An RNA of 207 nucleotides, treated with 2A3 and read out base by base. The reactions ran in a buffer of 150 mM KOAc, 10 mM MgCl2 and 150 mM bicine (pH 8.5), at 24 C. 2A3 adducts were read by reverse transcription with SuperScript II with manganese. Source: RMDB library OK3TST, as collected in RNAgym.

RNA sequence: GGGAACGACUCGAGUAGAGUCGAAAAAUAGCAAGUUGAGCCUUAAACACACUGAGUUUGCCUUGGGAGUAGAAUGUCCAGGCAGAGAAGUCCAUCAGGCAAUUGAAAAUGUGAAUCUGCAACUUGUAAAAAAUGUAUUAUUCAGCCUGGGCUGUCACCGUAUGCUCACUUUCGAGUGAGCAUACGGAAAAGAAACAACAACAACAAC
Reactivity to 2A3 in 0.01 (KOAc 150mM, MgCl2 10mM, bicine 150mM(pH8.5), 24C), signal-to-noise 1, nucleotides 027 to 156: a000u220a000g020c040a010a010g030u000u000g050a030g060c040c000u300u180a020a230a000c020a000c000a000c010u040g050a050g130u040u010u000g020c020c010u040u090g000g000g000a020g080u190a060g040a210a000u060g000u000c000c020a010g010g000c000a000g060a000g000a030a030g140u110c000c000a090u090c030a020g020g000c000a000a000u080u170g050a020a050a070a210u070g000u080g020a050a110u000c040u050g030c030a000a060c000u030u080g060u190a000a000a000a190a000a190u220g050u120a140u180u100a110u010u200c020a000g010c000c000u000g000g000g000c000u010g080u090c070a050